The record gives the reactivity of an RNA of 177 nucleotides to 2A3 and DMS. The data come from the RNA Mapping Database (RMDB), library RFM100. The reactions ran in a buffer of 150 mM KOAc, 10 mM MgCl2 and 150 mM bicine (pH 8.5), at 24 C. The 2A3 profile rests on 1,022 reads.
RNA sequence: GGGAACGACUCGAGUAGAGUCGAAAAAGUCGGCUGAAUACACUCGCUGUAUCGACAACAAUCAUAUUGUAUCGUUACGGCAAAAGCAAGCCAGAGGUGGCUGUGAGUGUUAGGCCGGGGGUCUACAGAGACCCGCGAAUUUCGAUUCGCGGGUCUCAAAAGAAACAACAACAACAAC
Reactivity to 2A3 in 0.01 (KOAc 150mM, MgCl2 10mM, bicine 150mM(pH8.5), 24C), signal-to-noise 2, nucleotides 027 to 126: a020g260u140c000g000g000c000u020g030a010a030u050a010c010a000c000u000c010g010c000u000g000u000a030u010c000g030a010c010a180a000c020a130a000u190c130a070u220a130u200u030g020u020a020u000c000g000u010u010a000c000g030g000c030a010a000a000a000g000c000a050a000g010c010c020a100g020a070g150g180u120g000g000c000u010g000u020g010a000g000u000g000u060u290a040g000g000c000c010g000g000g010g000g000u040c020u020a030c100a010
Reactivity to DMS in 0.01 (KOAc 150mM, MgCl2 10mM, bicine 150mM(pH8.5), 24C), signal-to-noise 1, nucleotides 027 to 126: a040g000u060c000g020g000c020u000g010a200a220u050a070c030a000c000u000c000g050c000u000g000u000a000u000c000g010a000c080a010a040c010a020a050u000c080a060u010a300u000u000g020u000a050u000c000g000u010u010a000c000g000g010c000a030a060a120a200g000c000a030a030g000c000c000a000g000a260g000g050u000g010g000c000u000g050u000g000a000g000u000g040u000u000a050g060g010c000c070g000g120g000g000g000u000c000u020a100c240a240